[RMDB]
RNA sequence: GGGAACGACUCGAGUAGAGUCGAAAAUAAGUGGGCUACACUAAAUAAUCUCCGUCUGGGGUUAGUUAGAAGAGCUUAAUCAGACUAGCUGAAUGGAAGCCUGUUACCGGGCUGAUGUUUAUGCGAAAUACUAAUACGGUGACUACGCUCGUAGAUAUCUAACACGUCAGUUCGCUGACGUGUUAGAAAAAGAAACAACAACAACAAC
Reactivity to DMS in 0.01 (KOAc 150mM, MgCl2 10mM, bicine 150mM(pH8.5), 24C), signal-to-noise 1, nucleotides 027 to 156: u000a070a050g020u010g020g050g060c030u000a210c060a200c000u000a060a010a000u100a040a010u000c000u010c020c040g040u020c070u000g100g010g040g020u000u000a050g000u030u000a030g030a050a120g000a230g020c100u000u020a080a100u000c050a020g000a040c000u000a260g040c040u010g020a050a060u000g000g000a300a110g000c010c020u000g030u010u000a030c090c040g000g020g010c000u010g000a220u010g000u020u000u000a030u010g000c010g020a090a060a100u050a140c220u000a040a080u020a040c030g000g010u020g000a040c010u020a060c140g020c050u000c060g020u000a160g010a180u000a140
Reactivity to 2A3 in 0.01 (KOAc 150mM, MgCl2 10mM, bicine 150mM(pH8.5), 24C), signal-to-noise 2, nucleotides 027 to 156: u230a110a040g030u080g000g040g000c040u120a020c040a000c020u040a060a040a020u030a010a020u040c050u040c040c080g040u040c020u020g000g000g000g020u020u030a020g000u020u010a020g010a130a010g040a100g060c050u100u190a020a030u040c000a000g000a010c000u010a000g030c000u010g010a000a000u020g010g010a000a010g000c000c000u010g030u000u050a000c000c000g000g010g020c000u010g010a010u050g040u000u010u020a200u260g020c000g030a000a020a000u300a030c180u180a020a000u000a000c010g010g000u000g010a000c000u020a020c030g070c070u050c050g090u090a040g000a100u070a060